Chemical mapping of a 177-nucleotide RNA with DMS and 2A3. Values cover nucleotides 27 to 126. 2A3 adducts were read by reverse transcription with SuperScript II with manganese. It was measured as part of the RMDB library OK1LIB.
[RMDB]
RNA sequence: GGGAACGACUCGAGUAGAGUCGAAAAACCACCCGCAGUGCCGACUUUCGGGACGGCCGGAUGUCCAAGACCUUCAUGACGGCGCUGGUCCUGUCCCUGCAGUCGUGCGGCCGGCUGUAUGUGGGCCCUGGUCUAGUCAGUUCGCUGACUAGACCAGAAAAGAAACAACAACAACAAC
Reactivity to DMS in 0.01 (KOAc 150mM, MgCl2 10mM, bicine 150mM(pH8.5), 24C), signal-to-noise 2, nucleotides 027 to 126: a130c020c100a150c000c050c090g030c040a040g000u020g060c000c020g000a010c000u000u000u010c300g000g000g000a030c000g000g010c000c010g000g000a040u000g000u030c000c020a090a220g010a110c180c030u000u070c110a030u090g000a190c250g020g020c000g020c010u000g000g020u050c010c110u000g000u000c010c000c000u000g000c190a010g020u000c000g000u020g000c000g000g050c050c080g010g000c120u000g000u000a100u020g050u020g000g000g000c110c000
Reactivity to 2A3 in 0.01 (KOAc 150mM, MgCl2 10mM, bicine 150mM(pH8.5), 24C), signal-to-noise 5, nucleotides 027 to 126: a000c030c010a030c000c000c010g000c010a030g080u100g150c010c000g030a040c040u120u090u110c100g020g010g020a040c000g000g020c000c010g020g000a200u090g110u100c010c010a100a090g050a240c060c050u200u200c160a150u200g080a070c060g010g020c020g000c010u010g000g020u120c000c080u150g000u000c000c000c000u000g020c010a010g000u020c000g030u070g020c000g010g010c020c000g050g000c030u030g030u190a160u100g030u050g010g020g010c000c010